Source: RMDB library OK3TST, as collected in RNAgym. Chemical mapping of a 207-nucleotide RNA with DMS and 2A3.

[RMDB]
RNA sequence: GGGAACGACUCGAGUAGAGUCGAAAAGGGGCUGUAUGCGCAAAUCGACCCGACCAACGAGCUCGUCGCGCUGUCGAAGAAGCGCCAGAAAAUCUACACGUCGAUCGAAAUCAACCCCGACUUCGCCGACAUCGGCGAGGCGUAUCUCGUCGGCCUCACAAAUAUCGUGGUUCGCCACGAUAUUUGUAAAAGAAACAACAACAACAAC
Reactivity to DMS in 0.01 (KOAc 150mM, MgCl2 10mM, bicine 150mM(pH8.5), 24C), signal-to-noise 1, nucleotides 027 to 156: g030g000g050g000c060u000g000u010a070u010g010c080g030c030a060a190a160u000c060g010a060c020c090c000g000a110c000c050a060a030c040g000a090g000c110u000c100g030u000c020g040c030g020c010u000g020u000c050g010a090a080g030a190a120g000c000g000c020c000a110g000a170a120a110a110u010c060u000a130c070a140c080g020u000c080g040a050u000c020g000a030a060a130u000c040a040a120c030c000c010c000g000a020c010u000u000c040g030c020c000g010a240c190a210u000c040g010g010c000g030a020g000g020c030g010u000a130u000c040u020c040g020u000c010g050g000c000c020u010c030
Reactivity to 2A3 in 0.01 (KOAc 150mM, MgCl2 10mM, bicine 150mM(pH8.5), 24C), signal-to-noise 3, nucleotides 027 to 156: g000g000g010g000c010u030g040u190a110u200g050c000g000c030a040a070a000u000c000g000a010c000c020c020g000a010c020c020a040a150c190g060a070g080c090u090c140g050u030c020g000c020g060c290u100g020u040c020g020a040a000g040a080a050g020c000g000c000c000a000g030a010a100a000a040u060c070u160a080c090a030c130g060u040c040g040a070u050c050g030a120a030a020u090c040a020a120c010c000c000c010g070a130c000u020u000c000g000c050c020g160a300c070a170u300c040g010g010c000g010a010g000g000c020g060u100a110u060c060u000c020g040u010c010g010g000c000c030u070c010